[RMDB]
RNA sequence: GGGAACGACUCGAGUAGAGUCGAAAAUCCUAAGUCAAGGAGGUAGAAGAGAUAGCUGUGCAACAGCUUCGUCGGAAACGACGAAGACAUGCACCGAAACUUCUAUAAUCUCCUUGAUAUGGAAAAAUCUCGCAUUCGUUUCGACGAAUGCGAGAAAUCCAAUAAUAAGGUUCGCCUUAUUAUUGGAAAAAGAAACAACAACAACAAC
Reactivity to DMS in 0.01 (KOAc 150mM, MgCl2 10mM, bicine 150mM(pH8.5), 24C), signal-to-noise 2, nucleotides 027 to 156: u010c010c000u000a070a210g000u000c000a020a040g000g000a010g120g020u030a020g000a010a000g040a110g000a220u000a160g010c130u020g010u010g030c000a040a110c080a200g000c000u010u000c000g040u000c000g020g010a230a140a210c030g010a020c000g010a000a010g000a080c050a300u000g000c020a020c010c040g010a100a170a140c020u010u010c000u000a010u010a180a120u000c010u000c000c000u010u000g000a000u010a150u000g000g000a010a060a060a100a080u000c000u000c000g040c000a010u000u020c010g010u000u000u000c220g010a100c030g000a010a000u000g010c000g010a000g010a000a030a060
Reactivity to 2A3 in 0.01 (KOAc 150mM, MgCl2 10mM, bicine 150mM(pH8.5), 24C), signal-to-noise 4, nucleotides 027 to 156: u020c000c000u030a140a000g020u000c000a000a000g000g010a000g000g030u010a000g020a040a000g050a020g040a080u120a150g100c160u070g010u000g020c010a090a080c050a170g010c010u000u000c000g000u000c000g010g050a050a080a070c010g000a000c010g000a000a000g010a030c010a050u020g000c000a000c010c010g020a040a030a020c000u000u000c010u000a030u030a040a130u040c000u000c000c000u000u010g000a000u000a020u010g010g030a040a080a030a070a070u060c010u000c000g000c000a000u010u000c000g000u020u020u160c180g020a020c000g000a000a000u000g000c000g000a000g000a000a000a010
The record gives the reactivity of an RNA of 207 nucleotides to DMS and 2A3.
2A3 adducts were read by reverse transcription with SuperScript II with manganese.
Reactivities are rounded to 0.1 and cut off at 0 and 3.
The DMS profile rests on 4,428 reads.
The data come from the RNA Mapping Database (RMDB), library RNAMAK.